[RMDB]
RNA sequence: GGGAACGACUCGAGUAGAGUCGAAAAAUCCAAUUGACUUGCCUUUCAACUCUGAACAGUUUCUUGAUCACAGUGUAAAUAGCUGCUUGAAUUUCACUGCUGUUACAUAGCUUUUCAGAUAGUCAAGGAAAUAUGAUUCUGCCAUAUUCAUGCCAGCCGAAAUCGAUGGUUUCGACCAUCGAUUUCGAAAAGAAACAACAACAACAAC
Reactivity to 2A3 in 0.01 (KOAc 150mM, MgCl2 10mM, bicine 150mM(pH8.5), 24C), signal-to-noise 1, nucleotides 027 to 156: a000u030c000c000a010a100u030u050g070a000c020u020u100g010c010c000u090u270u140c140a130a090c110u000c000u000g030a030a010c000a090g020u170u060u100c070u080u050g030a070u090c000a000c000a030g020u000g030u050a090a120a040u100a060g010c020u080g070c040u090u140g090a030a070u050u020u010c010a020c000u030g130c050u000g050u030u020a050c010a030u160a000g010c010u080u000u040u040c010a030g000a050u050a050g000u050c010a040a020g020g090a080a040a080u160a050u100g080a120u050u080c000u060g130c130c020a120u070a090u230u220c120a030u180g090c000c020a030g020c010
Conditions: 150 mM KOAc, 10 mM MgCl2 and 150 mM bicine (pH 8.5), 24 C. The record gives the reactivity of an RNA of 207 nucleotides to 2A3. It was measured as part of the RMDB library OK3TST. For 2A3, 443 sequencing reads were counted.